Chemical mapping of a 177-nucleotide RNA with DMS and 2A3. For 2A3 the reverse transcriptase was SuperScript II with manganese. 2A3 is a SHAPE reagent: it acylates the 2'-hydroxyl of flexible nucleotides of all four kinds. The DMS profile rests on 1,109 reads.
[RMDB]
RNA sequence: GGGAACGACUCGAGUAGAGUCGAAAAGAUAUGGACAGAUGGAGACAUGCUGUCCAUCGGAAACGAUGGGUCAGCAACAGCUCCAUACUGUCCUAAGUCAAAACUUGGAAACUUCGGUUUCCAAGAAGUACAGAGGGUUGUUCGCAACCCUCUGUACAAAAGAAACAACAACAACAAC
Reactivity to DMS in 0.01 (KOAc 150mM, MgCl2 10mM, bicine 150mM(pH8.5), 24C), signal-to-noise 1, nucleotides 027 to 126: g000a020u000a150u010g000g000a010c000a020g020a020u000g000g010a030g010a030c250a170u010g010c000u000g000u000c010c000a030u000c010g000g000a010a030a050c000g010a000u000g000g000g010u030c010a000g000c020a070a020c290a170g020c010u000c000c000a000u000a080c000u000g010u010c000c000u000a000a070g000u000c010a130a100a090a290c010u000u000g000g010a040a020a010c010u000u030c240g020g000u000u000u000c000c000a000a010g000a080a120
Reactivity to 2A3 in 0.01 (KOAc 150mM, MgCl2 10mM, bicine 150mM(pH8.5), 24C), signal-to-noise 1, nucleotides 027 to 126: g000a010u030a000u050g000g010a000c010a000g020a000u000g080g020a010g000a070c140a200u230g020c000u000g000u000c000c000a000u020c000g020g030a010a010a010c000g030a020u000g000g060g130u300c010a010g070c030a120a090c160a160g000c000u000c000c010a000u020a010c010u020g000u000c000c020u020a000a000g010u020c030a020a050a150a240c020u060u000g010g010a020a020a000c000u090u030c300g140g020u000u000u000c090c000a000a000g090a010a010